[RMDB]
RNA sequence: GGGAACGACUCGAGUAGAGUCGAAAAGCCAUGAUUCGUCAUGGCAAAAAGCGUACUACACCGUGGGUGUGGGAGAAGGAUGGUCCCAAAUAGGACCAUGCUUCGAGGAUCACACCGUAACAUCGGUGUAUCGCAAAAAGGUGCCUUCGGGCACCAAGUUCUAAAACAUCUUCGGAUGUUUUAGAACAAAAGAAACAACAACAACAAC
Reactivity to DMS in 0.01 (KOAc 150mM, MgCl2 10mM, bicine 150mM(pH8.5), 24C), signal-to-noise 1, nucleotides 027 to 156: g000c000c000a020u000g000a040u000u000c300g030u030c030a010u000g000g050c000a010a000a030a050a120g010c020g020u010a050c080u000a040c010a010c000c000g000u000g040g000g010u000g030u000g020g000g010a090g010a040a000g020g000a010u000g010g010u000c000c000c010a040a150a220u000a080g030g010a000c000c000a000u000g000c010u000u010c030g010a080g000g010a060u000c020a010c010a010c010c000g040u010a070a140c140a110u000c000g030g000u030g010u000a000u020c020g000c010a040a020a030a110a110g030g020u000g010c000c010u010u000c300g080g020g000c010a000c000c000a000a110
Reactivity to 2A3 in 0.01 (KOAc 150mM, MgCl2 10mM, bicine 150mM(pH8.5), 24C), signal-to-noise 3, nucleotides 027 to 156: g020c000c010a010u000g000a020u060u100c150g020u030c150a010u010g020g000c040a020a010a000a000a060g020c020g020u080a090c020u000a000c030a000c000c000g010u020g070g010g000u000g000u000g000g000g010a000g000a000a000g090g060a000u020g010g030u060c030c030c030a130a250a050u260a070g000g010a000c000c000a000u030g050c000u000u000c000g010a210g000g010a010u000c000a000c010a000c000c000g010u030a110a050c020a110u230c010g000g000u000g000u000a010u080c000g020c000a000a000a000a010a100g000g000u000g000c010c010u050u120c230g080g000g000c000a000c000c000a000a010
This 207-nucleotide RNA was probed chemically with DMS and 2A3. The reactions ran in a buffer of 150 mM KOAc, 10 mM MgCl2 and 150 mM bicine (pH 8.5), at 24 C. Source: RMDB library RNAMAK, as collected in RNAgym. 2A3 adducts were read by reverse transcription with SuperScript II with manganese. The 2A3 profile rests on 3,679 reads.